[RMDB]
RNA sequence: GGGAACGACUCGAGUAGAGUCGAAAAGAUAUGGAGAUUACCAACAGCUUGUCACUCGGAAACGAGUGCAAGACAUGGGGGAUCUCCUAAGUCAAAAGGUGCUACCAAGUUCGCUUGGUAGCACCAAGUUGACGGUUAGGUUCGCCUAACCGUCAACAAAAGAAACAACAACAACAAC
Reactivity to 2A3 in 0.01 (KOAc 150mM, MgCl2 10mM, bicine 150mM(pH8.5), 24C), signal-to-noise 2, nucleotides 027 to 126: g020a000u030a030u100g010g000a020g000a030u000u110a300c010c010a080a180c020a020g020c000u040u090g180u300c030a000c010u000c000g000g050a030a070a030c040g010a010g000u010g000c010a000a000g040a090c070a160u090g000g020g000g040g000a000u000c000u010c020c000u010a020a000g000u010c030a040a040a040a150g040g000u000g000c000u020a000c000c010a030a000g020u070u210c300g090c230u000u010g000g000u020a000g000c000a000c000c000a010a000
Reactivity to DMS in 0.01 (KOAc 150mM, MgCl2 10mM, bicine 150mM(pH8.5), 24C), signal-to-noise 2, nucleotides 027 to 126: g000a040u020a300u010g000g000a030g000a000u000u010a080c000c000a090a110c040a260g040c000u000u000g010u040c000a020c000u000c000g000g010a050a100a140c000g030a020g010u000g000c020a000a000g010a030c130a160u000g000g000g010g020g000a010u000c000u000c000c000u000a030a100g010u000c040a060a040a120a210g010g020u000g000c000u000a000c000c000a000a020g030u010u000c180g000c010u000u010g000g000u000a010g010c000a000c000c000a000a020